[RMDB]
RNA sequence: GGGAACGACUCGAGUAGAGUCGAAAAUGUUUCAAAGAGGCACAUGGAUGCCACAGACAAAAUCAAGUUUCCAUGGUUGAAGGAGAAGAGGACGAUAGAGUUUGGGGAGGCAGCAGGCUACGUCUGCCACAGAAGAUAUAAAGAUAUGGAGCCACAAAUUUAUAGGGGUAUUCGUACCCCUAUAAAUAAAAGAAACAACAACAACAAC
Reactivity to 2A3 in 0.01 (KOAc 150mM, MgCl2 10mM, bicine 150mM(pH8.5), 24C), signal-to-noise 2, nucleotides 027 to 156: u030g020u020u100u090c070a100a130a010g040a090g020g000c070a010c030a060u120g070g010a030u060g050c030c010a020c060a010g070a030c040a020a090a000a050u150c070a130a100g010u020u010u000c010c010a000u050g010g040u040u110g050a070a010g010g010a060g020a100a030g030a010g000g000a000c000g000a010u050a030g020a030g000u070u060u080g030g010g000g000a010g010g040c010a010g010c000a000g020g030c000u020a030c040g060u010c020u030g020c010c000a010c010a020g060a080a000g020a030u060a000u020a200a110a000g100a000u130a050u200g040g000a020g000c000c100a050c040a070a130
Reactivity to DMS in 0.01 (KOAc 150mM, MgCl2 10mM, bicine 150mM(pH8.5), 24C), signal-to-noise 1, nucleotides 027 to 156: u010g000u000u000u000c070a010a090a200g000a160g080g000c060a060c050a030u000g030g020a070u000g000c000c010a040c140a070g000a220c060a040a050a090a300u000c040a100a140g010u000u000u000c010c010a100u030g000g010u000u010g000a100a120g000g020a160g010a050a010g030a060g000g010a020c050g010a160u000a110g000a150g000u000u000u010g000g010g020g000a060g020g000c030a020g010c010a040g020g010c000u010a030c060g010u000c030u000g000c020c050a140c050a050g000a050a030g010a100u000a150u000a060a030a080g010a130u000a070u010g010g000a090g020c000c000a050c100a040a130

Notes
Conditions: 150 mM KOAc, 10 mM MgCl2 and 150 mM bicine (pH 8.5), 24 C. This 207-nucleotide RNA was probed chemically with 2A3 and DMS. It was measured as part of the RMDB library OK3TST. For DMS, 1,933 sequencing reads were counted.